[RMDB]
RNA sequence: GGGAACGACUCGAGUAGAGUCGAAAACUCCUCCUCCACCAAUCGAUUGGAGCAACGCUGGCUCUGUUUUUCCCAUCGACGGGAAAGAGGAUGGAUCCGGAACGGACCAUCAAGAAGAUAAAGAGGACGUGACGACCACGUUCGCGUGGUCGUCACGAAAAGAAACAACAACAACAAC
Reactivity to 2A3 in 0.01 (KOAc 150mM, MgCl2 10mM, bicine 150mM(pH8.5), 24C), signal-to-noise 1, nucleotides 027 to 126: c000u000c000c000u000c090c010u050c000c000a000c000c000a000a150u040c080g060a000u030u030g000g060a100g050c000a150a060c050g040c090u020g160g020c010u010c040u040g070u000u200u000u000u000c000c020c000a170u090c040g070a030c060g050g040g060a020a020a020g020a030g040g020a000u060g000g000a150u000c000c000g080g010a030a080c090g010g070a000c000c000a000u000c000a000a060g080a050a050g000a050u170a170a020a000g000a080g220g000a000
This 177-nucleotide RNA was probed chemically with 2A3. The data come from the RNA Mapping Database (RMDB), library OK1LIB. Reactivities are given for positions 27 through 126. The 2A3 profile rests on 387 reads. The RNA was probed in 150 mM KOAc, 10 mM MgCl2 and 150 mM bicine (pH 8.5) at 24 C.